[RMDB]
RNA sequence: GGGAACGACUCGAGUAGAGUCGAAAAGCCACAUAUCCCGUGACAUUGCGAAAGCAAGGCUGGCGGUAGGUAGUCCUGGGCGGCGACAGCCUUGGACUGUGGCGUAAAGGUGUACCUGGGGCCGUUAUAACGCGGUAACAGUUCGCUGUUACCGCAACGUAAGAGCCAAGUUCGCUUGGCUCUUACGAAAAGAAACAACAACAACAAC
Reactivity to DMS in 0.01 (KOAc 150mM, MgCl2 10mM, bicine 150mM(pH8.5), 24C), signal-to-noise 1, nucleotides 027 to 156: g040c010c000a000c010a120u010a150u000c060c000c040g010u010g010a090c060a120u000u000g020c040g010a210a120a210g010c010a020a010g000g030c000u000g050g040c000g000g060u000a110g030g000u000a040g020u000c020c020u030g020g020g000c020g030g020c040g040a070c040a180g000c000c000u000u010g010g000a040c040u000g010u000g020g000c030g050u000a030a080a040g010g000u010g000u000a030c030c010u000g000g010g030g010c010c010g010u000u010a090u000a100a110c140g000c000g000g000u000a000a020c000a000g030u000u000c170g010c010u010g000u000u000a000c000c000g000c000a000a030
Reactivity to 2A3 in 0.01 (KOAc 150mM, MgCl2 10mM, bicine 150mM(pH8.5), 24C), signal-to-noise 3, nucleotides 027 to 156: g010c020c000a010c000a020u090a030u080c010c010c020g030u030g030a080c110a190u040u070g010c030g080a130a030a010g000c020a010a010g010g040c090u080g020g030c000g000g000u030a040g030g150u080a010g000u000c000c050u040g000g030g000c020g000g020c050g040a040c050a020g010c010c000u000u000g000g000a030c030u030g010u000g010g000c000g010u020a080a060a010g030g010u080g000u060a040c010c020u030g000g000g020g000c000c000g000u030u050a150u050a170a080c130g000c000g010g010u000a000a000c000a010g040u070u070c190g010c150u000g000u000u010a010c000c000g010c000a000a000

Source: RMDB library M2RFPK, as collected in RNAgym. Structure probing data (DMS and 2A3) for a 207-nucleotide construct. 2A3 adducts were read by reverse transcription with SuperScript II with manganese. Reactivities are rounded to 0.1 and cut off at 0 and 3. High 2A3 reactivity points to a flexible backbone, as in loops and unpaired stretches. For DMS the reverse transcriptase was MarathonRT.